[RMDB]
Chemical mapping of a 177-nucleotide RNA with 2A3 and DMS. Reactivities are given for positions 27 through 126. The RNA was probed in 150 mM KOAc, 10 mM MgCl2 and 150 mM bicine (pH 8.5) at 24 C.
RNA sequence: GGGAACGACUCGAGUAGAGUCGAAAAGAGAGCUGCUUCGGCAGCUCUCCGUCAGGUAGUUCCUAUCUCAAUUACCUGUAGUGGCGAACGUCCGGAUAGGAAGAGAGCCCUGCUUCGGCAGGGCUAAGUGGAGUAAACUAUUCGUAGUUUACUCCACAAAAGAAACAACAACAACAAC
Reactivity to 2A3 in 0.01 (KOAc 150mM, MgCl2 10mM, bicine 150mM(pH8.5), 24C), signal-to-noise 5, nucleotides 027 to 126: g000a000g010a010g000c020u020g010c020u060u080c280g090g010c020a000g010c000u000c000u020c000c000g020u010c040a020g000g030u020a010g020u040u030c010c000u010a020u020c060u000c050a080a120u050u020a020c010c000u050g040u190a140g100u100g120g030c060g030a120a040c020g130u050c040c020g000g010a020u020a010g040g030a050a010g110a020g000a000g010c000c010c000u000g010c000u020u040c150g110g000c000a000g030g000g000c000u000a020a000
Reactivity to DMS in 0.01 (KOAc 150mM, MgCl2 10mM, bicine 150mM(pH8.5), 24C), signal-to-noise 6, nucleotides 027 to 126: g000a010g010a010g020c000u000g010c000u000u020c200g030g010c000a010g000c000u000c000u000c000c010g010u010c030a020g010g010u000a020g010u000u000c020c010u000a020u000c020u010c130a080a050u000u000a020c010c010u000g010u000a100g030u010g010g010c070g010a130a100c110g000u000c070c050g010g010a020u000a020g000g010a180a130g000a140g010a040g000c000c000c000u000g000c000u000u010c200g030g020c000a000g000g000g010c010u000a000a030
DMS (dimethyl sulfate) methylates the pairing face of unpaired adenines and cytosines. Source: RMDB library M2PK50, as collected in RNAgym. 2A3 adducts were read by reverse transcription with SuperScript II with manganese.